[RMDB]
RNA sequence: GGGAACGACUCGAGUAGAGUCGAAAACACCAGCUUCGUCACUCACUACAGGGUGGCCAAGACCUUCCGUACGUCUCCCGCCGAACUUCCGAAGCGGAUCAUCAAGGCACUUCGACAGUACCUCCAACUGAUUGCGUUCUUUCGAGAACGCAAUCAGAAAAGAAACAACAACAACAAC
Reactivity to DMS in 0.01 (KOAc 150mM, MgCl2 10mM, bicine 150mM(pH8.5), 24C), signal-to-noise 1, nucleotides 027 to 126: c100a230c040c040a120g040c020u000u010c230g000u010c010a010c000u010c010a060c180u000a070c300a130g000g000g060u000g000g030c020c140a040a040g010a060c050c050u000u000c030c040g020u000a070c080g000u000c010u000c020c000c020g010c020c030g000a110a130c040u000u000c060c030g030a030a140g020c140g010g020a030u000c070a030u000c070a140a070g000g050c120a050c020u000u020c010g000a050c030a050g010u000a120c080c030u000c060c010a120a200
Reactivity to 2A3 in 0.01 (KOAc 150mM, MgCl2 10mM, bicine 150mM(pH8.5), 24C), signal-to-noise 1, nucleotides 027 to 126: c030a090c000c010a000g000c000u070u040c000g010u070c010a000c020u040c030a000c040u290a080c160a070g020g000g000u040g040g000c010c010a000a010g080a080c020c010u060u010c010c030g060u090a100c030g040u000c010u020c000c000c020g000c000c030g090a100a080c070u140u010c060c040g040a050a030g010c000g050g050a100u000c010a030u050c010a040a080g030g030c010a020c100u060u030c030g040a050c060a070g050u050a070c000c010u000c000c000a060a080